[RMDB]
RNA sequence: GGGAACGACUCGAGUAGAGUCGAAAACCCUUAGCAUUCGUGCUAAGGGAAAUAACGGUCGGCUCAUGCAGCUAGUCGAAAAUGCUGCUCGACCUAUUGGUAAAAUCUGGCCGUUCGCGGCCAGAAAGCAGACAUUUAAGUUCGCUUAAAUGUCUGCAAAAGAAACAACAACAACAAC
Reactivity to 2A3 in 0.01 (KOAc 150mM, MgCl2 10mM, bicine 150mM(pH8.5), 24C), signal-to-noise 2, nucleotides 027 to 126: c010c000c000u000u000a010g010c020a050u020u040c220g080u030g000c010u010a000a000g000g000g030a060a140a010u090a060a010c050g000g020u010c000g020g010c070u070c260a050u190g000c000a000g000c000u050a050g300u240c090g080a050a070a030a000u110g000c010u000g000c020u020c000g010a020c010c000u030a140u010u130g150g020u120a000a050a010a100u000c000u000g000g020c030c010g000u030u010c210g010c000g070g020c020c000a000g010a000a000a000
Reactivity to DMS in 0.01 (KOAc 150mM, MgCl2 10mM, bicine 150mM(pH8.5), 24C), signal-to-noise 2, nucleotides 027 to 126: c000c000c000u000u010a000g000c000a000u000u030c150g060u000g010c000u000a000a000g000g020g000a000a030a030u000a070a100c200g000g000u000c010g020g040c130u020c110a080u000g030c030a010g010c000u000a200g040u010c230g000a090a080a080a150u000g000c000u000g010c010u000c030g000a010c000c010u000a040u000u000g000g000u000a090a080a130a120u000c010u010g000g020c010c000g040u000u010c120g020c020g000g010c010c000a000g000a010a020a100
An RNA of 177 nucleotides, treated with 2A3 and DMS and read out base by base. For 2A3, 1,663 sequencing reads were counted.